[RMDB]
RNA sequence: GGGAACGACUCGAGUAGAGUCGAAAACAUUGAGCACCACAAAGGCUGGUAUCGCAAAGAUCUCGGUGAAUAAGAGAUAUUUCGAGACGUUCUUCACUUCUCUAGAUUCGCACUCGGAUUUGUCGAACUAUUAGAGAACAUUCGUGUUCUCUAAUAGAAAAGAAACAACAACAACAAC
Reactivity to DMS in 0.01 (KOAc 150mM, MgCl2 10mM, bicine 150mM(pH8.5), 24C), signal-to-noise 9, nucleotides 027 to 126: c050a070u000u000g010a060g010c120a070c020c030a060c080a140a120a130g010g010c120u010g010g000u000a070u010c120g010c150a070a080a070g010a060u000c010u000c020g000g020u000g010a060a080u010a090a140g000a050g000a110u000a030u000u010u000c010g000a030g000a120c030g010u000u000c010u000u000c060a090c130u000u000c040u000c040u010a090g000a130u000u000c040g010c120a070c100u000c060g000g000a120u000u010u000g010u000c040g000a080a160
Reactivity to 2A3 in 0.01 (KOAc 150mM, MgCl2 10mM, bicine 150mM(pH8.5), 24C), signal-to-noise 9, nucleotides 027 to 126: c010a010u020u080g020a010g010c020a010c030c010a020c070a090a250a040g150g010c110u020g020g020u050a060u150c070g020c160a090a070a050g080a140u020c010u000c020g030g050u090g070a100a080u090a110a020g020a000g020a020u020a040u110u210u050c010g010a010g010a020c010g010u030u000c000u120u070c020a030c050u120u080c030u000c010u040a060g010a160u050u030c020g010c040a040c050u050c050g100g040a130u080u050u120g080u080c020g010a040a030